[RMDB]
RNA sequence: GGGAACGACUCGAGUAGAGUCGAAAACUGUGAGAAGUUCGCUUCUCACAGAAAAAGAUAUGGAUCACGAGGGAGCUCGGGCCAGUCGGAAACGACUGGUUGAGCGAGGAUCUCGUGAGUCCUAAGUCAAAAACGGGCAUCCUUCGGGAUGCCCGAACAAGCAAUACUUGUUCGCAAGUAUUGCUUGAAAAGAAACAACAACAACAAC
Reactivity to 2A3 in 0.01 (KOAc 150mM, MgCl2 10mM, bicine 150mM(pH8.5), 24C), signal-to-noise 1, nucleotides 027 to 156: c000u000g000u000g000a000g020a000a020g010u050u160c200g050c140u010u000c000u000c000a010c000a000g010a020a050a000a000a000g030a010u070a020u040g000g000a000u000c010a010c000g010a010g020g000g000a010g000c000u030c070g030g040g000c000c000a000g000u000c000g020g030a020a030a010c000g000a000c000u000g040g010u010u010g000a000g020c000g020a090g000g010a000u000c000u000c000g020u000g010a010g000u010c000c000u030a040a010g020u010c010a000a030a040a030a110c010g010g010g000c000a000u000c000c000u040u160c160g090g000g000a010u010g010c030c000c000g000a050a000
Reactivity to DMS in 0.01 (KOAc 150mM, MgCl2 10mM, bicine 150mM(pH8.5), 24C), signal-to-noise 1, nucleotides 027 to 156: c000u040g000u000g000a000g050a040a000g040u000u010c300g020c000u000u000c010u000c000a000c000a000g000a010a060a140a130a110g030a070u000a150u000g010g010a270u010c000a020c040g020a070g040g030g000a120g010c000u010c000g010g010g030c010c000a000g000u010c000g030g000a090a060a120c000g020a000c010u010g000g050u030u000g060a000g040c000g000a040g040g000a060u000c000u010c010g010u000g010a020g010u010c010c010u000a060a130g000u010c020a050a040a090a110a170c040g010g020g000c010a030u000c000c000u000u010c300g040g000g040a010u000g020c030c020c000g010a000a040